Background:
Conditions: 150 mM KOAc, 10 mM MgCl2 and 150 mM bicine (pH 8.5), 24 C. This 177-nucleotide RNA was probed chemically with 2A3 and DMS. The 2A3 profile rests on 21,262 reads. The data come from the RNA Mapping Database (RMDB), library OK2TRN. For 2A3 the reverse transcriptase was SuperScript II with manganese. Reactivities are given for positions 27 through 126. For DMS the reverse transcriptase was MarathonRT.
RNA sequence: GGGAACGACUCGAGUAGAGUCGAAAAGAGCAACAACUACACCUACAACAUGGGCAGCCACGUCCUGCAGUUUGGCAGCCUCAGCAUCGAUGAGGAGCCCGUCGCCGACUACCUGGGCGAGCUCAACGUUCCCUUUAAUAUUCGUAUUAAAGGGAACAAAAGAAACAACAACAACAAC
Reactivity to 2A3 in 0.01 (KOAc 150mM, MgCl2 10mM, bicine 150mM(pH8.5), 24C), signal-to-noise 9, nucleotides 027 to 126: g030a010g030c040a010a080c010a040a020c040u110a040c060a070c030c010u080a070c030a160a010c020a150u120g020g040g000c020a010g050c030c030a090c030g040u030c000c020u030g030c030a040g020u070u170u180g040g000c020a020g050c000c000u020c010a020g030c030a130u240c090g170a110u050g010a020g030g010a030g040c020c020c020g090u070c030g010c020c000g030a070c030u070a070c030c060u040g020g010g000c010g000a030g000c010u020c040a050a060c070
Reactivity to DMS in 0.01 (KOAc 150mM, MgCl2 10mM, bicine 150mM(pH8.5), 24C), signal-to-noise 9, nucleotides 027 to 126: g010a100g010c030a080a070c080a070a080c070u010a080c110a100c050c020u000a060c090a070a080c100a120u000g010g010g020c050a090g010c040c060a080c060g000u000c030c010u000g010c070a050g010u000u000u010g040g010c020a120g020c010c010u000c030a030g010c110a120u010c140g010a070u010g000a050g010g010a180g010c040c030c060g010u010c060g010c030c020g010a060c050u000a060c090c090u010g010g010g010c010g000a130g010c040u000c060a100a080c190